[RMDB]
RNA sequence: GGGAACGACUCGAGUAGAGUCGAAAAGAUAUGGAGAACCGUCAGCUAUGAAGCAUAUGAGGAUGUCCUCACUCGGAAACGAGUGAGGGACAUCCUCAUAUGUGGAGCUGGCGGUUCUCCUAAGUCACAAUGUGAACUACUUCGGUAGUUCACAUUGAAAAGAAACAACAACAACAAC
Reactivity to DMS in 0.01 (KOAc 150mM, MgCl2 10mM, bicine 150mM(pH8.5), 24C), signal-to-noise 2, nucleotides 027 to 126: g020a020u010a300u010g010g030a010g010a000a010c000c000g000u010c000a000g010c000u000a250u010g020a110a280g000c000a010u000a000u000g000a010g000g010a030u000g010u000c000c000u000c000a000c010u010c000g000g010a140a120a240c000g010a020g010u000g010a040g020g000g010a000c000a000u000c000c010u010c000a000u000a000u000g020u000g000g000a010g010c010u000g010g010c000g000g000u000u000c010u000c010c000u000a000a060g010u000c040a300